Structure probing data (DMS and 2A3) for a 207-nucleotide construct. Conditions: 150 mM KOAc, 10 mM MgCl2 and 150 mM bicine (pH 8.5), 24 C. The 2A3 profile rests on 5,707 reads. For 2A3 the reverse transcriptase was SuperScript II with manganese. It was measured as part of the RMDB library RNAMAK.
[RMDB]
RNA sequence: GGGAACGACUCGAGUAGAGUCGAAAAGGGGUCGAAUCGGAGUUUCGCAGAUAUGUGAACUACCUCUGAAGCCUCCACGGAGGCACAUGUAGAAACCACGAUUCGACGGAGGCACCCAAAACUAUAGAAUUAGUUCUUCGGAACUAAUUCUAUAGAAGUAAUGUUAUAUGUUCGCAUAUAACAUUACAAAAGAAACAACAACAACAAC
Reactivity to DMS in 0.01 (KOAc 150mM, MgCl2 10mM, bicine 150mM(pH8.5), 24C), signal-to-noise 2, nucleotides 027 to 156: g000g030g040g030u020c020g000a020a030u000c020g000g000a130g040u000u010u000c010g030c190a220g020a120u010a020u010g010u000g010a080a160c060u000a300c020c000u040c000u020g010a050a220g000c000c010u060c000c010a300c070g010g010a040g030g000c000a010c040a020u000g020u010a050g000a020a060a120c010c000a170c050g010a100u000u000c010g040a050c010g010g020a040g030g060c000a100c010c010c010a030a070a110a260c020u000a000u000a000g000a060a010u020u000a020g000u000u000c010u000u010c300g060g020a020a010c000u000a010a000u000u000c000u000a000u000a000g000a090a160
Reactivity to 2A3 in 0.01 (KOAc 150mM, MgCl2 10mM, bicine 150mM(pH8.5), 24C), signal-to-noise 4, nucleotides 027 to 156: g050g000g010g010u030c010g000a000a000u010c010g030g030a130g050u000u020u020c060g030c280a010g020a040u030a010u020g010u010g010a100a100c090u130a120c300c000u030c000u010g010a030a010g010c000c000u000c010c000a020c020g010g000a000g000g010c010a000c000a000u010g000u020a070g020a000a010a000c020c020a090c090g000a000u000u010c000g000a000c010g010g000a000g000g000c000a020c000c010c000a040a150a010a000c000u000a020u000a000g000a000a000u030u030a010g000u010u000c010u050u090c300g010g000a000a000c000u000a000a000u000u000c000u000a000u000a000g000a030a010